[RMDB]
RNA sequence: GGGAACGACUCGAGUAGAGUCGAAAAAUAGGGAUAAUUACAUUCUGCGCAGAUAUGGGAGAUAAUGGUGAUGGCAAGAAGUCAGACGAUAACGUCCAACUCCAGAAUGAUGUACCAGCUCCGGUUGCAUGACACAAUUGUUCGCAAUUGUGUCAUGAAAAGAAACAACAACAACAAC
Reactivity to 2A3 in 0.01 (KOAc 150mM, MgCl2 10mM, bicine 150mM(pH8.5), 24C), signal-to-noise 3, nucleotides 027 to 126: a000u140a090g060g010g000a040u090a140a060u190u120a060c030a040u040u000c020u040g030c040g000c120a010g010a080u150a140u170g030g010g030a080g020a040u110a140a070u140g070g030u100g090a210u050g050g000c030a040a050g080a060a010g120u050c030a020g000a020c000g050a040u050a100a040c020g000u000c010c040a060a060c000u000c000c000a000g030a040a050u060g010a030u090g050u040a060c030c010a000g000c030u030c010c000g070g050u080u130g020
Reactivity to DMS in 0.01 (KOAc 150mM, MgCl2 10mM, bicine 150mM(pH8.5), 24C), signal-to-noise 5, nucleotides 027 to 126: a090u020a110g010g000g010a100u000a050a100u010u000a130c040a050u000u000c010u000g010c150g030c160a030g020a070u000a090u010g010g010g020a050g010a100u000a080a090u010g010g040u010g000a100u010g010g010c050a110a120g010a110a120g010u000c030a060g010a060c030g010a100u010a070a130c150g010u000c010c020a030a050c010u000c020c010a030g010a030a040u000g010a110u000g000u000a110c010c010a100g000c070u000c030c030g010g020u000u000g020